An RNA of 207 nucleotides, treated with 2A3 and DMS and read out base by base.
[RMDB]
RNA sequence: GGGAACGACUCGAGUAGAGUCGAAAAGAUCGAGAUUGGCCAAAAACGUGCGCUGUCUCUCGAGUUUGACGGCGGUGGACAGUUCGAGGCUCUUGUUGAUGCUCACGAUCAAUACGAUGAACAAGAGUAUGAUCACGAACACGACCACGCAGCACACCUCCCAAACUACAUUCGUGUAGUUUGGGAGAAAAGAAACAACAACAACAAC
Reactivity to 2A3 in 0.01 (KOAc 150mM, MgCl2 10mM, bicine 150mM(pH8.5), 24C), signal-to-noise 2, nucleotides 027 to 156: g050a030u120c020g000a000g030a040u140u170g030g030c030c020a070a030a020a080a040c180g090u100g020c150g020c030u060g090u090c010u010c000u000c040g020a040g010u090u100u110g050a070c060g010g030c030g030g010u010g010g000a070c010a030g010u000u000c010g020a010g000g000c010u040c000u000u000g020u040u060g100a120u070g040c070u110c050a090c070g080a110u090c000a040a040u140a110c140g060a090u120g060a040a010c020a040a010g000a010g040u100a080u160g140a080u140c030a010c100g000a010a010c100a050c090g050a050c020c000a040c060g100c000a020g030c000a040c000a030c000
Reactivity to DMS in 0.01 (KOAc 150mM, MgCl2 10mM, bicine 150mM(pH8.5), 24C), signal-to-noise 2, nucleotides 027 to 156: g010a100u000c020g000a150g010a090u020u010g040g000c000c030a100a090a070a130a090c130g040u010g040c090g010c020u010g040u020c040u000c030u000c000g010a210g040u000u000u000g000a080c080g010g000c010g040g000u000g010g020a130c080a130g050u000u000c020g000a300g020g020c020u000c020u000u020g040u000u000g010a080u000g010c010u010c040a110c020g030a120u000c040a100a090u000a090c080g010a140u020g000a070a100c050a020a040g000a170g060u000a050u010g020a130u000c030a190c010g010a050a000c010a110c060g000a140c030c030a060c040g000c050a180g000c040a080c050a070c100
For 2A3, 1,510 sequencing reads were counted. DMS adducts were read by reverse transcription with MarathonRT. In probing experiments dimethyl sulfate is read out at A N1 and C N3, which are open when not base-paired. The data come from the RNA Mapping Database (RMDB), library OK3TST.